[RMDB]
RNA sequence: GGGAACGACUCGAGUAGAGUCGAAAAAAUAAGAGUUUGGAUUAACCUAUAGGGAAUUAGCGAUCAAGAAUACAACCUAAGGACCUGGUUGACUUAAUUAUUCCAUAGGUUGCUGGAAGCUAGCGAACCGGUUUAAUGAAUUCGUUCAUUAAACCGGAAAAGAAACAACAACAACAAC
Reactivity to DMS in 0.01 (KOAc 150mM, MgCl2 10mM, bicine 150mM(pH8.5), 24C), signal-to-noise 1, nucleotides 027 to 126: a070a030u000a080a050g000a070g040u000u000u010g010g000a120u010u010a000a020c000c030u000a020u000a190g000g000g000a040a060u010u000a040g010c040g010a020u000c050a020a090g010a130a120u020a080c100a040a080c140c100u040a080a050g010g010a190c260c060u000g000g000u000u000g000a110c020u000u010a020a010u000u000a050u010u000c010c010a060u000a020g000g000u010u000g020c070u010g040g000a040a060g000c070u010a060g000c080g020a160a120